[RMDB]
RNA sequence: GGGAACGACUCGAGUAGAGUCGAAAACUGUUCUCUCACGCUCUUUUUCUUUGACGCAGCGGCGGGUGGGUACCCAGGGUAAAACACAAUUGGUGUUUCCCCGGUAACACCGUGCGGUUCCUGUGGUUCGCCCCGCCAACGCAGAUAGAUAAAGAAACACUUCUCCAAUGUUCGCAUUGGAGAAGUGAAAAGAAACAACAACAACAAC
Reactivity to 2A3 in 0.01 (KOAc 150mM, MgCl2 10mM, bicine 150mM(pH8.5), 24C), signal-to-noise 2, nucleotides 027 to 156: c030u050g010u040u000c020u000c030u030c040a100c080g090c000u010c010u090u010u060u050u000c050u120u300u100g040a020c010g000c030a030g010c010g050g060c040g000g010g030u270g020g130g000u050a040c000c000c030a010g030g000g000u030a030a030a040a000c010a000c020a120a300u180u280g190g000u000g020u000u010u020c010c010c010c010g000g030u030a070a010c070a030c030c010g030u050g010c150g010g000u000u000c000c000u020g090u300g070g030u050u010c020g230c000c000c010c000g000c010c000a000a010c000g000c000a000g000a020u010a010g010a000u040a030a020a000g020a010a040a000